[RMDB]
RNA sequence: GGGAACGACUCGAGUAGAGUCGAAAACUUUUCAACUUCGGUUGAAAAGAACCUGCGCGCUGCUCGCAGUUAAGUCUAACUCCUCCUCUGAGUCAUCGGGGGUUAUAUAAUCAUUCGUGAUUAUAAAUCUUAUUUGAGAUUUCGAUCUCAAAUAAGAAAAAGAAACAACAACAACAAC
Reactivity to 2A3 in 0.01 (KOAc 150mM, MgCl2 10mM, bicine 150mM(pH8.5), 24C), signal-to-noise 2, nucleotides 027 to 126: c000u020u000u000u000c000a000a000c000u050u050c280g130g000u010u000g000a010a010a000a000g000a030a050c010c030u050g030c020g000c010g020c060u100g010c030u040c000g010c010a030g000u050u110a120a030g020u030c070u070a070a060c020u020c020c010u010c000c000u000c020u020g030a040g130u150c060a080u050c120g000g000g010g000g020u060u020a030u000a010u000a020a000u000c010a010u010u080c100g040u010g010a010u010u030a010u030a010a100a050
Reactivity to DMS in 0.01 (KOAc 150mM, MgCl2 10mM, bicine 150mM(pH8.5), 24C), signal-to-noise 3, nucleotides 027 to 126: c000u010u010u010u000c000a000a010c000u000u020c180g020g010u000u000g010a010a000a010a000g000a080a090c190c090u000g000c070g010c040g010c050u000g000c040u000c010g010c220a060g030u010u000a060a080g020u010c070u000a120a120c070u000c020c030u000c030c020u010c010u010g010a040g000u010c300a070u000c030g010g000g000g010g010u010u010a040u010a020u000a000a000u000c000a020u000u020c140g030u000g000a010u000u000a000u000a020a110a150